Structure probing data (2A3 and DMS) for a 207-nucleotide construct. The reactions ran in a buffer of 150 mM KOAc, 10 mM MgCl2 and 150 mM bicine (pH 8.5), at 24 C. 2A3 adducts were read by reverse transcription with SuperScript II with manganese. Source: RMDB library ARCHII, as collected in RNAgym.

RNA sequence: GGGAACGACUCGAGUAGAGUCGAAAAGAGCUUACCAGACUAGCAAUACAGAAUGCCUGUCACUCGGCACGCUGUAAAGCGAACCUUUAAAUGAGUGUCUAUGAACGUAGAGAUUUAAGUGGCAAUAUGUUUGGACGCGGGUUCGACUCCCGCCGUCGAGUACGUGUUACUUCGGUAACACGUACUCAAAAGAAACAACAACAACAAC
Reactivity to 2A3 in 0.01 (KOAc 150mM, MgCl2 10mM, bicine 150mM(pH8.5), 24C), signal-to-noise 3, nucleotides 027 to 156: g040a020g040c040u120u120a080c040c020a070g030a050c040u060a010g000c010a030a070u010a060c000a000g030a130a020u030g010c000c000u060g020u070c030a030c050u030c020g000g000c000a000c030g000c010u000g000u020a030a050a000g000c000g000a010a020c010c000u110u100u110a060a080a040u120g000a000g020u020g010u030c050u090a120u110g060a050a020c050g050u060a040g020a030g000a110u030u060u130a100a030g040u030g010g000c000a060a040u070a040u130g060u040u050u030g040g000a010c010g000c000g010g000g000u000u060c020g000a000c020u000c010c000c000g010c010c040g010u040c100
Reactivity to DMS in 0.01 (KOAc 150mM, MgCl2 10mM, bicine 150mM(pH8.5), 24C), signal-to-noise 2, nucleotides 027 to 156: g030a100g000c020u000u010a130c070c000a090g010a050c000u010a180g030c020a040a300u010a180c040a080g000a030a010u000g030c010c000u000g020u000c080a140c060u000c100g010g000c000a020c000g060c000u000g040u000a030a010a300g010c010g010a080a080c030c040u000u000u010a050a060a040u000g030a110g000u010g010u010c010u000a130u020g030a060a090c100g000u000a060g000a090g010a090u000u000u010a040a060g040u010g000g000c040a050a110u020a020u000g000u000u000u000g050g010a080c050g020c000g020g010g000u010u000c090g020a300c050u000c000c020c010g000c000c050g020u000c070